[RMDB]
RNA sequence: GGGAACGACUCGAGUAGAGUCGAAAAGUGUACAAACUGAAAAGCCAUUCAAACGUUCAAUGCAACCAUUCGGUGGUAUUCGUAUGGCGAAAGCAGCUUGUGAAGCUUACGGUUACGAAUUAGACGAAGCUGUACAAGCUUUCGAGCUUGUACAGCUAAAAGAAACAACAACAACAAC
Reactivity to 2A3 in 0.01 (KOAc 150mM, MgCl2 10mM, bicine 150mM(pH8.5), 24C), signal-to-noise 4, nucleotides 027 to 126: g080u070g030u070a010c030a020a070a000c000u020g000a020a060a070a080g000c000c000a050u030u170c170a160a070a030c110g100u180u160c070a010a030u090g050c010a020a050c010c000a040u230u200c120g060g000u060g040g020u000a020u030u050c030g000u000a010u010g020g000c010g060a010a010a000g080c020a000g020c000u020u000g020u030g060a050a030g010c000u050u050a070c040g070g020u070u010a050c060g060a230a210u170u120a180g030a060c040g040a030
Reactivity to DMS in 0.01 (KOAc 150mM, MgCl2 10mM, bicine 150mM(pH8.5), 24C), signal-to-noise 3, nucleotides 027 to 126: g030u000g000u030a010c050a010a010a050c040u030g010a040a080a130a300g000c030c000a110u010u040c140a100a090a090c060g020u070u040c180a040a050u010g000c030a040a000c020c000a150u050u060c160g050g010u000g000g010u010a010u000u010c020g030u000a010u000g020g010c010g050a060a110a060g020c040a020g000c040u000u000g000u010g000a140a290g000c040u000u010a160c100g000g010u000u000a060c140g050a060a110u020u030a060g000a060c100g000a120
This 177-nucleotide RNA was probed chemically with 2A3 and DMS. For DMS the reverse transcriptase was MarathonRT. Values cover nucleotides 27 to 126. Conditions: 150 mM KOAc, 10 mM MgCl2 and 150 mM bicine (pH 8.5), 24 C.